[RMDB]
RNA sequence: GGGAACGACUCGAGUAGAGUCGAAAAAGCGAAACGAUCCGGAUCUCGCCGCCAGGACGCGGCUUAUCGAUCCCCUGAUAGCCCAUUAUCAUCUGCGCCUGGGCGAUGAGAGCACCGCGCUGAGCGCUUUCCAGCGCAUCGUUAAUAAUCAGAAUGGUAAACAUAUUAGGUUCGCCUAAUAUGUUUAAAAAGAAACAACAACAACAAC
Reactivity to DMS in 0.01 (KOAc 150mM, MgCl2 10mM, bicine 150mM(pH8.5), 24C), signal-to-noise 3, nucleotides 027 to 156: a090g010c030g020a110a080a070c020g020a090u000c030c020g020g060a300u000c010u010c020g110c000c050g060c000c010a090g010g010a080c020g020c000g010g020c130u000u000a030u000c020g000a090u000c020c000c000c050u020g010a130u000a110g000c000c000c040a110u000u010a090u010c060a150u000c030u000g020c020g020c040c010u000g000g020g010c010g000a030u010g010a050g000a070g020c140a090c060c050g010c050g030c020u010g000a130g020c050g020c030u000u000u000c070c000a150g010c010g040c030a060u000c030g000u020u000a060a100u010a090a080u010c070a110g010a070a120u010g010g010

The data come from the RNA Mapping Database (RMDB), library OK3TST.
Chemical mapping of a 207-nucleotide RNA with DMS.
For DMS the reverse transcriptase was MarathonRT.
Conditions: 150 mM KOAc, 10 mM MgCl2 and 150 mM bicine (pH 8.5), 24 C.